[RMDB]
RNA sequence: GGGAACGACUCGAGUAGAGUCGAAAAACACAAUAGAUACCCACUAAAUGAAAUUAUGCUCAAUAAACUUUACAAGUGGUAUCAAAGUUAUUUCGAAAAUUUCAUUCACAGAGGUAUGGGUUAGGUGCUCCAUGUAUGUUUUCGAACAUACAUGGAGAAAAGAAACAACAACAACAAC
Reactivity to DMS in 0.01 (KOAc 150mM, MgCl2 10mM, bicine 150mM(pH8.5), 24C), signal-to-noise 4, nucleotides 027 to 126: a150c050a050c080a060a060u010a140g000a060u000a010c030c010c010a020c020u000a090a030a030u000g000a020a010a010u000u000a060u010g020c110u000c080a030a030u000a060a040a040c010u000u000u000a080c100a150a140g040u020g010g000u000a060u000c120a040a020a030g010u000u000a040u000u000u000c080g000a030a050a030a020u000u000u000c000a010u000u000c040a030c300a020g010a110g000g000u000a000u010g010g020g010u010u010a070g010g020u000g000
Reactivity to 2A3 in 0.01 (KOAc 150mM, MgCl2 10mM, bicine 150mM(pH8.5), 24C), signal-to-noise 4, nucleotides 027 to 126: a000c050a020c020a030a090u120a110g130a040u010a020c010c030c010a000c020u030a020a020a030u030g010a030a000a040u040u030a040u260g040c000u010c070a020a030u060a100a160a070c050u040u060u090a070c050a180a210g070u080g180g050u180a070u230c030a010a010a000g010u030u030a040u030u050u090c060g010a040a000a060a110u010u030u030c020a020u030u020c030a070c030a150g030a020g050g010u020a030u050g100g010g010u050u070a060g040g050u040g060